An RNA of 177 nucleotides, treated with 2A3 and DMS and read out base by base. Values cover nucleotides 27 to 126. DMS adducts were read by reverse transcription with MarathonRT. The reactions ran in a buffer of 150 mM KOAc, 10 mM MgCl2 and 150 mM bicine (pH 8.5), at 24 C. The data come from the RNA Mapping Database (RMDB), library OK2TST.

RNA sequence: GGGAACGACUCGAGUAGAGUCGAAAACAUUGCCGCGCGCGCAUGAACUGGCUGUGGAAAUUGCGCGGCUGCCCGCGCUCGCCGUUGCGCAGAUCAAGGAAGUGAUGCUCGUCGGCGCCGAUCUGCAAUUUACGUCCUGAUUCGUCAGGACGUAAAUAAAAGAAACAACAACAACAAC
Reactivity to 2A3 in 0.01 (KOAc 150mM, MgCl2 10mM, bicine 150mM(pH8.5), 24C), signal-to-noise 3, nucleotides 027 to 126: c000a080u040u250g020c030c020g000c010g000c010g010c000g000c010a060u180g070a100a070c090u150g140g010c030u050g030u070g170g070a070a120a160u170u120g020c000g010c000g000g000c010u020g010c000c010c000g000c030g020c040u070c020g010c020c030g100u040u080g030c020g000c040a010g000a050u050c030a070a080g170g050a160a020g060u040g040a030u060g040c010u000c030g080u010c050g060g030c000g000c000c000g030a100u030c010u060g010c030a030
Reactivity to DMS in 0.01 (KOAc 150mM, MgCl2 10mM, bicine 150mM(pH8.5), 24C), signal-to-noise 4, nucleotides 027 to 126: c130a100u010u000g020c010c010g010c040g030c020g010c210g010c020a040u000g020a110a190c170u010g000g020c050u010g030u000g000g000a080a080a130u010u010g030c010g010c000g010g000c040u010g010c040c010c030g000c090g040c050u000c070g010c030c050g010u010u010g020c100g030c030a050g000a100u000c030a100a120g020g020a130a100g010u000g000a120u000g030c050u000c050g010u000c040g000g000c020g010c300c050g010a040u000c030u000g000c170a130